[RMDB]
RNA sequence: GGGAACGACUCGAGUAGAGUCGAAAACUUGGGUGGAGACAUUUAGGAGUUAUCGGAAGAUGGCGGAGGUACCGACGACAGUGGGCCGGAUGAAACGGGGUACCGAGAAUACGUGGAAAGUGAGGGGUUACGACAUGUAUGCUCAGCUUACGUCGAGGGUAUAUAUGUGUUUCGAUAUAUGUAUACCAAAAGAAACAACAACAACAAC
Reactivity to DMS in 0.01 (KOAc 150mM, MgCl2 10mM, bicine 150mM(pH8.5), 24C), signal-to-noise 6, nucleotides 027 to 156: c060u000u000g030g020g050u010g010g010a130g010a080c060a080u000u010u000a120g030g010a120g020u000u000a060u010c050g030g020a080a100g000a080u000g020g010c060g000g020a090g030g030u010a070c030c020g010a090c050g010a030c050a080g030u010g020g030g000c020c030g020g010a120u000g000a040a070a100c050g010g000g020g010u000a060c040c010g000a100g010a070a060u010a030c050g030u000g000g000a060a060a110g020u000g000a060g020g000g020g000u000u000a070c040g010a050c040a040u010g020u000a040u000g000c010u000c030a100g020c040u000u000a060c080g020u000c030g010a150g000
Reactivity to 2A3 in 0.01 (KOAc 150mM, MgCl2 10mM, bicine 150mM(pH8.5), 24C), signal-to-noise 5, nucleotides 027 to 156: c030u050u060g020g000g010u040g010g050a020g020a050c040a100u080u090u080a050g010g020a030g020u070u050a090u130c070g020g010a020a020g030a050u060g020g020c040g010g010a040g020g010u030a030c020c020g060a050c010g010a000c030a010g020u070g010g020g000c010c010g020g000a040u040g040a020a050a020c030g000g000g000g010u010a040c010c030g010a010g020a050a050u120a030c040g010u040g020g040a060a010a020g050u050g020a010g000g000g000g000u020u050a010c020g000a000c010a010u050g010u040a020u050g000c010u000c070a030g000c020u060u040a030c020g020u010c020g040a060g010